Conditions: 150 mM KOAc, 10 mM MgCl2 and 150 mM bicine (pH 8.5), 24 C.
The record gives the reactivity of an RNA of 177 nucleotides to DMS.
For DMS, 838 sequencing reads were counted.
It was measured as part of the RMDB library OK2TRN.
In probing experiments dimethyl sulfate is read out at A N1 and C N3, which are open when not base-paired.
RNA sequence: GGGAACGACUCGAGUAGAGUCGAAAACAGCUACAUGGGAGGCUGAGGUGGGAGAAUCGCUUAAGCCCAGGAAGUCGAGGCUGCAGUGAGCUGUGACUUGCUACUGCACUCCAGCCCAUGCAGCUGAUGUUCAGUGCCCAUUCGUGGGCACUGAACAAAAAGAAACAACAACAACAAC
Reactivity to DMS in 0.01 (KOAc 150mM, MgCl2 10mM, bicine 150mM(pH8.5), 24C), signal-to-noise 1, nucleotides 027 to 126: c020a010g000c030u030a060c020a060u020g010g010g020a120g020g020c000u000g010a110g020g000u010g050g010g030a140g000a090a120u010c020g000c030u010u020a100a050g000c000c010c100a140g010g000a130a060g000u000c100g000a110g000g010c300u010g020c010a090g010u000g000a000g020c010u010g020u020g030a110c130u010u000g000c000u000a060c040u000g040c010a040c140u030c000c050a060g000c010c000c010a040u000g000c030a020g070c000u000g000a070